[RMDB]
RNA sequence: GGGAACGACUCGAGUAGAGUCGAAAACCAGUGGAGCCGUGGGAUGCUCUUCCCAAUCUGACCUGACCCCUCCCCCAGCGGGUCGCCCAGGAAUGGCGGGACCCCACUUCAGCAGGGUCCGCGUUCCGCGUAAAUAGAGGUUCGCCUCUAUUUACGCAAAAGAAACAACAACAACAAC
Reactivity to 2A3 in 0.01 (KOAc 150mM, MgCl2 10mM, bicine 150mM(pH8.5), 24C), signal-to-noise 2, nucleotides 027 to 126: c020c010a020g030u050g090g030a030g030c000c030g070u060g020g070g010a040u100g010c010u000c040u080u010c010c010c000a020a060u040c060u060g110a080c010c020u040g160a110c000c010c010c010u020c000c000c000c000c000a010g000c010g000g000g000u030c010g020c030c020c020a020g050g040a020a000u130g300g300c020g020g020g020a030c000c010c000c010a030c000u170u160c020a070g000c040a010g000g010g020u000c000c000g010c010g010u010u010c010c030
Reactivity to DMS in 0.01 (KOAc 150mM, MgCl2 10mM, bicine 150mM(pH8.5), 24C), signal-to-noise 2, nucleotides 027 to 126: c030c020a140g010u010g020g010a030g010c040c080g030u010g000g010g010a140u010g020c060u000c060u000u010c020c010c020a110a060u020c100u010g010a060c020c010u000g000a270c050c000c000c030u010c020c010c000c010c000a080g000c060g010g000g040u000c010g010c010c010c030a210g000g020a010a020u000g000g040c020g010g040g010a020c000c000c000c040a060c110u020u020c170a100g000c150a090g000g010g000u010c000c000g000c000g000u000u000c030c010